[RMDB]
RNA sequence: GGGAACGACUCGAGUAGAGUCGAAAAGAUAUGGAAAGCUGGAGUCUGGUACCGAGGUAAUUGGAUACAUCGGAAACGAUGUAUCCAAUUAUACAGUACCAAGGACGUUGAAAGCUUUCCUAAGUCACAAUAAUUACUCCUUCGGGAGUAAUUAUUGAAAAGAAACAACAACAACAAC
Reactivity to DMS in 0.01 (KOAc 150mM, MgCl2 10mM, bicine 150mM(pH8.5), 24C), signal-to-noise 3, nucleotides 027 to 126: g000a070u000a300u000g000g000a000a010a000g020c000u000g010g020a150g010u000c010u010g010g010u000a010c000c000g020a300g000g000u000a000a000u000u000g000g000a020u010a000c000a000u000c010g040g000a200a090a270c000g030a010u000g010u000a000u000c000c000a000a000u000u000a000u000a000c000a010g000u000a000c000c010a080a110g010g000a010c000g010u000u020g010a140a170a040g000c000u010u000u000c000c000u000a010a080g020u000c060a290
Background:
The record gives the reactivity of an RNA of 177 nucleotides to DMS. The reactions ran in a buffer of 150 mM KOAc, 10 mM MgCl2 and 150 mM bicine (pH 8.5), at 24 C. It was measured as part of the RMDB library TTRINS. The DMS profile rests on 3,071 reads.